Source: RMDB libraries RFM100 and RFMREP, as collected in RNAgym. Chemical mapping of a 177-nucleotide RNA with DMS and 2A3. The reactions ran in a buffer of 150 mM KOAc, 10 mM MgCl2 and 150 mM bicine (pH 8.5), at 24 C. 2A3 adducts were read by reverse transcription with SuperScript II with manganese.
RNA sequence: GGGAACGACUCGAGUAGAGUCGAAAAGAAGGGGAGUGAAAAGAGCCUGAAAUCGGCCGGGGAUAGUGAGCAGUGGCUCGAAAGGUAAUCCCGGCAAAGGAAAGUGCUGAGAGGCGCGAGUACGAGCUAUAAUGAACUCGUUCGCGAGUUCAUUAUAAAAAGAAACAACAACAACAAC
Reactivity to DMS in 0.01 (KOAc 150mM, MgCl2 10mM, bicine 150mM(pH8.5), 24C), signal-to-noise 6, nucleotides 027 to 126: g010a100a070g000g010g000g010a070g010u010g000a090a060a090a100g010a150g000c030c020u010g000a020a090a060u020c140g010g000c000c010g000g000g000g010a100u010a070g010u040g000a020g020c020a260g010u030g020g010c000u000c010g010a040a100a070g000g020u000a090a070u000c000c000c020g000g010c030a010a020a090g010g010a080a150a140g000u010g000c030u000g000a180g000a160g000g000c020g010c010g000a060g020u000a040c030g010a130g020c120
Reactivity to 2A3 in 0.01 (KOAc 150mM, MgCl2 10mM, bicine 150mM(pH8.5), 24C), signal-to-noise 4, nucleotides 027 to 126: g080a040a020g040g020g000g000a050g010u110g070a030a030a070a050g050a030g010c020c020u040g060a020a070a100u110c040g040g010c000c000g000g000g000g020a060u060a110g170u130g060a010g000c040a060g140u220g130g000c010u000c020g030a070a050a000g080g030u070a020a040u020c000c000c000g020g010c010a040a020a000g020g000a040a020a000g010u020g000c010u020g020a030g000a030g070g040c010g000c010g010a000g010u010a000c000g000a020g000c000